The record gives the reactivity of an RNA of 177 nucleotides to 2A3 and DMS. The reactions ran in a buffer of 150 mM KOAc, 10 mM MgCl2 and 150 mM bicine (pH 8.5), at 24 C. It was measured as part of the RMDB library TTRDEL. Values cover nucleotides 27 to 126. DMS adducts were read by reverse transcription with MarathonRT.
RNA sequence: GGGAACGACUCGAGUAGAGUCGAAAAGAUAUGGAGUAUAACAACAGCACGUCGAUCGGAAACGAUCGCGUGACAUGUGUACUCCUAAGUCAAAACAUGAAAUACCCCUUCGGGGGUAUUUCAUGAACUCAUAGGAUGGGUUCGCCCAUCCUAUGAGAAAAGAAACAACAACAACAAC
Reactivity to 2A3 in 0.01 (KOAc 150mM, MgCl2 10mM, bicine 150mM(pH8.5), 24C), signal-to-noise 2, nucleotides 027 to 126: g000a010u030a010u090g000g020a000g020u020a030u230a200a120c090a030a050c080a080g090c010a000c000g300u300c120g120a000u010c020g000g000a070a000a040c000g000a000u000c010g000c010g000u010g080a000c000a030u010g000u020g010u010a000c000u020c010c000u000a090a000g000u000c040a050a020a180a230c000a010u000g000a000a000a020u000a000c050c060c010c000u030u080c270g090g000g000g000g000u000a000u000u010u010c010a000u000g020a000a000
Reactivity to DMS in 0.01 (KOAc 150mM, MgCl2 10mM, bicine 150mM(pH8.5), 24C), signal-to-noise 1, nucleotides 027 to 126: g010a000u000a270u010g000g010a000g010u000a000u010a070a060c010a050a070c230a210g000c000a000c000g020u020c020g020a020u000c000g020g000a080a040a130c000g040a020u000c000g000c000g000u000g010a070c040a080u000g000u000g000u000a010c010u000c010c000u000a040a050g000u000c030a100a080a160a140c020a000u010g000a000a010a000u000a010c000c000c000c010u000u000c280g030g060g000g000g010u000a010u000u010u000c000a000u000g010a120a110